The record gives the reactivity of an RNA of 177 nucleotides to DMS and 2A3. Conditions: 150 mM KOAc, 10 mM MgCl2 and 150 mM bicine (pH 8.5), 24 C. For 2A3 the reverse transcriptase was SuperScript II with manganese. The 2A3 profile rests on 13,960 reads.
[RMDB]
RNA sequence: GGGAACGACUCGAGUAGAGUCGAAAAUACGACGUAUUCGUACGUCGUAAAGGUACGAAAGUACAAAGGAGCUAAAGCAUGAGCUCCUAAAAAUCAUGCAAAACACGAGCCGAUUCGUCGGCUCGAAUAUGGUAUGGAGAUUCGUCUCCAUACCAUAAAAAGAAACAACAACAACAAC
Reactivity to DMS in 0.01 (KOAc 150mM, MgCl2 10mM, bicine 150mM(pH8.5), 24C), signal-to-noise 4, nucleotides 027 to 126: u000a000c000g000a000c000g020u000a030u000u010c220g030u000a010c010g000u000c010g000u000a000a040a080g010g010u000a000c000g010a130a130a180g000u000a010c000a090a120a170g010g000a000g000c000u000a080a100a160g000c000a010u000g000a020g010c000u000c000c000u000a000a000a000a000a000u000c000a010u000g000c010a090a050a060a100c190a150c010g000a010g020c000c000g000a040u000u000c190g000u000c000g010g000c000u000c000g010a010a060
Reactivity to 2A3 in 0.01 (KOAc 150mM, MgCl2 10mM, bicine 150mM(pH8.5), 24C), signal-to-noise 5, nucleotides 027 to 126: u050a000c000g000a000c000g000u010a020u010u110c190g010u050a000c000g000u000c000g000u010a030a000a010g110g010u000a000c010g040a130a010a040g000u000a010c040a050a170a070g010g000a000g000c020u070a200a180a020g000c020a010u010g000a000g000c000u000c000c010u020a000a010a010a000a000u040c010a000u000g010c020a050a010a070a030c140a020c030g000a000g000c010c000g010a020u030u040c190g050u000c000g120g000c000u000c000g010a000a000